Notes:
This 177-nucleotide RNA was probed chemically with 2A3 and DMS. For DMS the reverse transcriptase was MarathonRT. Values are in units of 0.01, from 0 to 300, in steps of 10. The RNA was probed in 150 mM KOAc, 10 mM MgCl2 and 150 mM bicine (pH 8.5) at 24 C. 2A3 adducts were read by reverse transcription with SuperScript II with manganese.

RNA sequence: GGGAACGACUCGAGUAGAGUCGAAAAAUGGGGUUCUGCCAUGGGUCGGGACUUUAAAUUCGGAGGAUUCGUCCUUUAAACGUUCCUCCAAGGGUCCCUUCCCCAAACCCUUACUUAUGUAAGAAAGCGCAAUAAAGAAGUUCGCUUCUUUAUUGCGAAAAGAAACAACAACAACAAC
Reactivity to 2A3 in 0.01 (KOAc 150mM, MgCl2 10mM, bicine 150mM(pH8.5), 24C), signal-to-noise 1, nucleotides 027 to 126: a030u020g000g020g020g040u070u060c080u060g180c130c040a120u140g000g020g000u000c000g010g000g010a010c000u000u020u020a060a120a100u090u100c300g020g010a000g020g080a040u110u080c000g010u070c010c140u160u170u170a110a140a000c000g000u010u010c010c000u060c040c020a000a000g020g000g000u020c000c000c000u000u050c000c000c000c000a030a000a010c000c040c020u000u000a020c000u000u140a070u280g050u040a010a070g030a300a130a010g100
Reactivity to DMS in 0.01 (KOAc 150mM, MgCl2 10mM, bicine 150mM(pH8.5), 24C), signal-to-noise 1, nucleotides 027 to 126: a060u000g020g010g000g000u010u000c150u010g050c120c090a080u000g010g020g040u000c190g020g000g010a020c000u020u000u010a280a020a220u000u000c050g000g000a010g010g010a050u010u010c010g020u020c080c190u000u020u000a110a160a010c020g000u010u000c000c000u000c000c010a010a090g000g030g000u000c000c000c010u020u000c020c000c000c250a070a040a050c080c030c000u010u000a030c060u000u000a100u010g020u000a040a080g000a070a080a120g000